[RMDB]
RNA sequence: GGGAACGACUCGAGUAGAGUCGAAAAGAUAUGGAGCCAUACAAGCGCCAGAACCCAGGCUUCCCUAUGUCGGAAACGACAUAGAACAGCCUGGGUUCUGGAACUACGCUUGUUGGCUCCUAAGUCACAACUUCUACAUGUUCGCAUGUAGAAGUUGAAAAGAAACAACAACAACAAC
Reactivity to DMS in 0.01 (KOAc 150mM, MgCl2 10mM, bicine 150mM(pH8.5), 24C), signal-to-noise 1, nucleotides 027 to 126: g010a060u000a300u010g000g000a010g050c000c010a020u040a020c000a000a010g020c010g010c010c000a000g000a010a030c000c000c000a070g010g000c000u000u010c300c200c010u000a000u000g010u000c000g030g010a200a150a300c030g010a060c000a010u010a000g020a080a170c150a060g000c000c010u000g000g000g010u000u000c000u000g010g000a030a010c100u020a290c040g010c000u000u020g000u000u000g000g000c000u040c010c000u020a000a040g010u020c060a280
Chemical mapping of a 177-nucleotide RNA with DMS. DMS adducts were read by reverse transcription with MarathonRT. Source: RMDB library TTRINS, as collected in RNAgym. High DMS reactivity at an A or C suggests that its Watson-Crick edge is free.